Structure probing data (DMS and 2A3) for a 177-nucleotide construct. It was measured as part of the RMDB library OK2TRN. The reactions ran in a buffer of 150 mM KOAc, 10 mM MgCl2 and 150 mM bicine (pH 8.5), at 24 C. For 2A3, 2,601 sequencing reads were counted. Values cover nucleotides 27 to 126. The DMS profile rests on 1,717 reads.
RNA sequence: GGGAACGACUCGAGUAGAGUCGAAAACUAGUCACUUGCAUUCCAUCAAAUCUCAACCUUUAUGCCUGAAUUGAGACCUUCGGCUACCACAAAUUAAUUGCAUCUUUAAUGUUUAUGCACUUUAGAACACCGUAAUAGCUUUCGAGCUAUUACGGUGAAAAGAAACAACAACAACAAC
Reactivity to DMS in 0.01 (KOAc 150mM, MgCl2 10mM, bicine 150mM(pH8.5), 24C), signal-to-noise 2, nucleotides 027 to 126: c030u010a040g030u000c080a060c050u000u010g000c050a050u000u010c060c030a040u000c120a040a090a130u010c030u010c030a070a110c090c040u010u000u010a050u010g000c040c020u000g000a060a130u000u000g010a070g010a080c070c040u000u000c060g000g000c050u000a090c060c020a060c100a040a050a100u000u000a080a040u000u010g010c030a030u000c070u000u000u020a100a090u000g000u020u000u000a050u010g000c060a040c210u000u000u000a080g020a080a200
Reactivity to 2A3 in 0.01 (KOAc 150mM, MgCl2 10mM, bicine 150mM(pH8.5), 24C), signal-to-noise 3, nucleotides 027 to 126: c010u020a010g080u040c020a000c020u040u090g030c010a050u080u000c040c000a030u050c040a070a110a150u040c020u020c040a050a030c010c040u150u090u070a100u140g020c030c010u100g070a160a080u060u030g040a040g040a050c000c010u030u030c050g040g000c000u060a060c000c020a030c030a080a070a050u120u060a020a070u120u060g000c010a010u020c040u070u180u120a230a160u140g060u030u110u060a000u050g020c000a020c070u130u060u060a070g030a130a010